[RMDB]
RNA sequence: GGGAACGACUCGAGUAGAGUCGAAAAACACCUGCCCACCUGACAUUCAAAAUAAAAUUGAGCAUACAACAAUUGCUGAUAAAAUAUUGCAAUAUGGCAGUCUGGGAGUUUUUUUGGGAGGUUUGGGCAUUGGAACAGCCAGAGGCUCUGGAGGAAGCAAGAAUUAGACCUUCGGGUCUAAUUCUUGAAAAGAAACAACAACAACAAC
Reactivity to 2A3 in 0.01 (KOAc 150mM, MgCl2 10mM, bicine 150mM(pH8.5), 24C), signal-to-noise 1, nucleotides 027 to 156: a000c110a060c000c000u050g020c020c020c000a020c020c000u060g030a060c060a060u040u050c050a020a190a050a070u280a050a170a120a070u180u130g050a110g030c020a030u050a200c030a220a020c030a160a230u150u000g020c000u080g020a110u120a250a100a140a070u230a030u110u090g000c030a000a080u030a060u180g060g000c000a000g000u010c000u030g020g060g000a080g060u020u000u000u000u040u250u220g020g000g000a020g000g000u000u110u150g030g020g000c020a030u020u140g000g120a020a020c000a020g090c020c000a050g000a110g060g000c000u030c020u050g000g000a030g030g000a000a000g050
The record gives the reactivity of an RNA of 207 nucleotides to 2A3. For 2A3 the reverse transcriptase was SuperScript II with manganese. Source: RMDB library OK3TST, as collected in RNAgym.